[RMDB]
RNA sequence: GGGAACGACUCGAGUAGAGUCGAAAAGAUAUGGAUGCGAUAAGUAUGUACCUCAACAGCUACAUUCGCUCUCGGAAACGAGAGCGAAUGUAGACAUGAGGGUAGUACUUUUGACGCAUCCUAAGUCCAAAGUCUGAGUGUUCGCACUCAGACUUUGAAAAGAAACAACAACAACAAC
Reactivity to DMS in 0.01 (KOAc 150mM, MgCl2 10mM, bicine 150mM(pH8.5), 24C), signal-to-noise 1, nucleotides 027 to 126: g000a190u000a290u010g020g040a010u000g000c000g040a190u000a000a060g000u000a000u030g000u030a300c000c000u000c010a130a170c290a160g000c000u000a000c000a010u000u000c010g000c000u000c000u000c020g040g010a070a080a250c020g010a000g000a040g040c000g020a020a000u000g000u010a000g000a040c100a120u040g000a050g010g000g000u030a300g000u000a030c000u000u000u010u030g000a270c090g000c000a000u000c000c010u000a000a120g000u000c050